[RMDB]
RNA sequence: GGGAACGACUCGAGUAGAGUCGAAAAGUUGUAAACUUCGGUUUACAACAAAUAAGAGAGAAAAGCUCUCCAUCGCUCUUGCAAGCGACAACGGAACCAAAAAAACCCAGCUCUUCGGAGCUGGGAAGAUUAGCAUACUCUUCGGAGUAUGCUAAUCAAAAGAAACAACAACAACAAC
Reactivity to DMS in 0.01 (KOAc 150mM, MgCl2 10mM, bicine 150mM(pH8.5), 24C), signal-to-noise 2, nucleotides 027 to 126: g000u000u000g010u000a000a000a030c000u000u010c270g050g020u000u000u020a000c000a000a030c000a020a090a070u000a050a160g020a050g000a050g030a130a080a130a300g000c020u000c000u000c000c130a140u000c000g020c010u010c030u000u000g000c230a130a080g000c010g000a020c130a030a070c050g000g020a060a070c020c030a010a010a060a060a090a090a140c000c000c000a030g010c000u000c010u000u000c130g030g010a010g000c000u000g000g000g010a010a000
Reactivity to 2A3 in 0.01 (KOAc 150mM, MgCl2 10mM, bicine 150mM(pH8.5), 24C), signal-to-noise 2, nucleotides 027 to 126: g000u000u000g000u000a000a000a010c010u000u060c140g060g000u000u000u010a000c000a000a000c000a000a040a000u070a020a010g030a000g010a010g040a060a200a050a140g120c000u000c000u000c020c000a050u030c000g000c000u010c020u060u180g010c090a050a030g010c000g010a010c010a060a000c020g060g040a020a010c040c000a050a030a000a000a020a040a110c020c000c000a010g020c010u000c000u010u100c300g100g020a000g000c010u000g000g000g000a000a000
The record gives the reactivity of an RNA of 177 nucleotides to DMS and 2A3. Values cover nucleotides 27 to 126. The reactions ran in a buffer of 150 mM KOAc, 10 mM MgCl2 and 150 mM bicine (pH 8.5), at 24 C.